[RMDB]
RNA sequence: GGGAACGACUCGAGUAGAGUCGAAAAGAACAGGCCUCUCGUAAACGUCAGGGAAAUUAAUGUUUUCAUUGUUAUUGGGUGAACCUCUGUUUUUUGAUUUAUUUGUCGCUGAAGGUUCAGUAAAUAACCACAAGGGAAGAUUCGUCUUCCCUUGUGGAAAAGAAACAACAACAACAAC
Reactivity to 2A3 in 0.01 (KOAc 150mM, MgCl2 10mM, bicine 150mM(pH8.5), 24C), signal-to-noise 3, nucleotides 027 to 126: g000a000a030c040a010g040g000c030c000u030c020u010c000g060u070a120a060a060c050g120u120c070a070g090g070g000a040a050a030u150u160a180a060u150g100u020u030u050u000c040a020u070u170g000u060u070a070u060u130g180g010g000u010g070a000a000c000c000u000c000u020g100u070u010u020u000u070u260g030a030u000u050u030a200u050u250u190g080u050c000g030c030u010g050a130a080g000g010u000u010c000a000g000u000a060a000a010u030a010a000
Reactivity to DMS in 0.01 (KOAc 150mM, MgCl2 10mM, bicine 150mM(pH8.5), 24C), signal-to-noise 3, nucleotides 027 to 126: g000a100a060c110a040g020g010c030c030u010c010u010c050g000u000a070a050a070c100g020u010c090a060g000g010g000a070a020a070u040u030a060a080u010g000u000u010u000u010c020a200u030u020g000u000u020a110u010u000g010g010g040u010g010a030a020c020c000u000c040u000g000u000u020u030u040u030u050g010a050u020u020u010a170u000u030u040g030u000c020g020c020u010g010a040a090g000g020u000u000c010a020g000u030a050a020a010u020a040a090